This 177-nucleotide RNA was probed chemically with DMS and 2A3. Source: RMDB library TTRDEL, as collected in RNAgym. For DMS, 5,422 sequencing reads were counted.

[RMDB]
RNA sequence: GGGAACGACUCGAGUAGAGUCGAAAAGAUAUGGACGUAGACAUGCUCAUUUCUCGGAAACGAGAACUGAGCAACAGCUACAGUCCUAAGUCAAACGAAAACGACUUGUUCGCAAGUCGUUUUCGAAGUCCAAUAACAUGUUCGCAUGUUAUUGGACAAAAGAAACAACAACAACAAC
Reactivity to DMS in 0.01 (KOAc 150mM, MgCl2 10mM, bicine 150mM(pH8.5), 24C), signal-to-noise 4, nucleotides 027 to 126: g010a060u010a300u010g000g000a000c010g000u000a000g010a030c070a250u000g000c000u000c000a000u000u000u000c000u010c000g000g000a090a110a190c000g010a010g000a000a000c100u010g010a000g000c000a000a020c270a180g010c000u000a010c000a140g010u000c000c000u000a020a080g000u000c040a050a140a290c020g000a010a000a010a020c000g000a010c010u000u000g010u000u000c170g020c000a010a000g000u000c000g010u000u000u000u000c000g000a070a090
Reactivity to 2A3 in 0.01 (KOAc 150mM, MgCl2 10mM, bicine 150mM(pH8.5), 24C), signal-to-noise 3, nucleotides 027 to 126: g020a020u050a050u140g000g010a000c000g000u000a010g020a080c040a140u090g000c010u010c010a010u010u010u000c010u000c010g030g020a090a070a040c020g000a010g000a000a000c000u010g010a000g000c000a000a010c010a000g000c000u010a010c140a090g000u000c000c000u010a080a010g080u040c050a080a050a120c020g020a010a000a000a000c010g020a000c010u010u010g030u100u150c270g020c160a010a000g000u000c000g000u000u010u000u000c000g000a010a020